The data come from the RNA Mapping Database (RMDB), library M2RFPK.
This 207-nucleotide RNA was probed chemically with 2A3 and DMS.
RNA sequence: GGGAACGACUCGAGUAGAGUCGAAAAUCAUCAAGAAGUAGGCUUAGGCCAAUUGCUUGGUGGUAAAAGUAGAGGGAAGGUAGCACUUCGACGCCUCUAAGUACGCUGUGGGAGUAGUGCUUAAAUCAAAAGCACAGCGACUUCGGUCGCUGUGCAAGUACCUUACGAUGUUCGCAUCGUAAGGUACAAAAGAAACAACAACAACAAC
Reactivity to 2A3 in 0.01 (KOAc 150mM, MgCl2 10mM, bicine 150mM(pH8.5), 24C), signal-to-noise 4, nucleotides 027 to 156: u030c000a010u020c010a010a000g020a070a030g060u090a030g030g000c020u100u100a100g170g000c020c020a060a090u060u030g020c000u000u020g000g000u020g010g000u000a060a090a010a020g070u070a010g000a030g030g020g010a030a020g050g020u060a030g030c040a020c080u030u030c040g060a050c050g110c010c000u000c030u030a060a020g030u040a020c040g000c110u060g010u090g060g060g010a060g020u110a020g020u030g050c010u040u110a030a060a060u180c080a090a080a010a000g010c000a000c000a000g000c000g000a000c000u010u020c140g070g000u000c000g000c000u010g020u000g000c000a000a000
Reactivity to DMS in 0.01 (KOAc 150mM, MgCl2 10mM, bicine 150mM(pH8.5), 24C), signal-to-noise 1, nucleotides 027 to 156: u030c000a000u000c020a020a010g030a050a020g030u000a120g040g000c010u000u010a140g080g010c000c000a060a080u000u020g000c010u000u000g040g030u010g000g000u080a040a040a120a130g030u000a030g010a040g010g000g020a110a050g000g010u000a130g000c040a140c030u000u000c050g000a090c060g010c020c010u010c030u000a080a060g020u010a040c030g000c040u000g030u010g020g020g000a060g050u000a060g030u000g000c010u000u000a040a070a110u020c070a030a100a120a170g010c000a000c000a000g000c000g030a030c010u000u010c300g030g040u000c010g040c010u030g040u000g030c010a010a030
2A3 adducts were read by reverse transcription with SuperScript II with manganese. The DMS profile rests on 2,579 reads. The reactions ran in a buffer of 150 mM KOAc, 10 mM MgCl2 and 150 mM bicine (pH 8.5), at 24 C.